[RMDB]
RNA sequence: GGGAACGACUCGAGUAGAGUCGAAAAGGGUGAUAGAGAAAUCUAUGUGUUGGGAGCAGAAGAAAGGAUAGUGCAAUCCAUCAUAGAAGCUAUAUCGCGAUCUAUAGGUAGGUUCUUCCCUUCCGACGAAUAUAGUCACAUUCGUGUGACUAUAUUCAAAAGAAACAACAACAACAAC
Reactivity to 2A3 in 0.01 (KOAc 150mM, MgCl2 10mM, bicine 150mM(pH8.5), 24C), signal-to-noise 9, nucleotides 027 to 126: g080g010g020u080g030a030u050a040g050a000g030a060a170a080u010c020u030a040u040g120u030g060u070u070g020g000g020a040g000c030a020g040a180a010g080a100a170a030g150g020a090u140a120g150u070g050c020a020a070u000c010c010a010u030c010a000u020a020g020a030a000g000c010u040a040u020a020u270c050g000c020g050a050u000c020u040a050u050a090g120g060u030a020g000g070u080u020c030u030u040c020c000c050u030u020c030c010g010a040c060
Reactivity to DMS in 0.01 (KOAc 150mM, MgCl2 10mM, bicine 150mM(pH8.5), 24C), signal-to-noise 9, nucleotides 027 to 126: g010g010g030u000g010a040u000a020g010a050g010a100a100a120u000c020u000a020u000g010u010g020u000u000g010g000g000a210g020c090a060g010a080a090g000a060a080a120g010g010a070u010a090g010u010g010c110a070a100u010c010c010a050u000c050a030u000a020g010a050a140g010c030u000a070u010a060u010c110g010c030g000a070u000c030u000a040u000a060g010g010u000a070g010g010u000u000c100u000u000c010c080c010u000u000c010c020g000a220c180